[RMDB]
The record gives the reactivity of an RNA of 177 nucleotides to DMS and 2A3.
RNA sequence: GGGAACGACUCGAGUAGAGUCGAAAAACACCAGCCAUACGUGGCUGGUGAAACGUUCAACCAUUAUGGUCGGAAGUAGGUUUGAAACCGAAGGAACGCAUCAGCUAGCGCAUACGUGCGCUAGCAAGUUUAGUAAGAGGUUCGCCUCUUACUAAACAAAAGAAACAACAACAACAAC
Reactivity to DMS in 0.01 (KOAc 150mM, MgCl2 10mM, bicine 150mM(pH8.5), 24C), signal-to-noise 9, nucleotides 027 to 126: a160c010a010c010c000a010g000c000c010a040u010a100c220g040u000g010g010c000u000g000g010u000g010a010a050a050c020g000u000u000c010a200a020c010c000a230u030u020a100u030g020g010u000c040g000g000a030a110g010u000a090g000g010u000u010u040g010a090a090a050c010c000g010a170a130g000g000a000a010c010g000c050a090u030c180a120g000c000u000a010g000c000g000c000a030u000a080c230g020u000g010c010g010c000u000a000g000c000a010a010
Reactivity to 2A3 in 0.01 (KOAc 150mM, MgCl2 10mM, bicine 150mM(pH8.5), 24C), signal-to-noise 9, nucleotides 027 to 126: a000c010a000c000c000a010g010c010c000a040u050a080c300g120u030g000g000c000u000g000g000u000g000a010a010a000c010g010u010u010c010a020a020c000c000a060u200u200a130u300g030g010u030c030g030g020a050a020g010u030a030g060g100u030u080u270g240a270a110a020c010c010g010a020a010g050g010a030a010c010g020c030a120u120c050a050g000c000u000a000g000c000g000c010a000u020a070c230g120u020g000c000g000c000u000a000g000c000a000a000
Description
The RNA was probed in 150 mM KOAc, 10 mM MgCl2 and 150 mM bicine (pH 8.5) at 24 C. The data come from the RNA Mapping Database (RMDB), libraries RFM100 and RFMREP.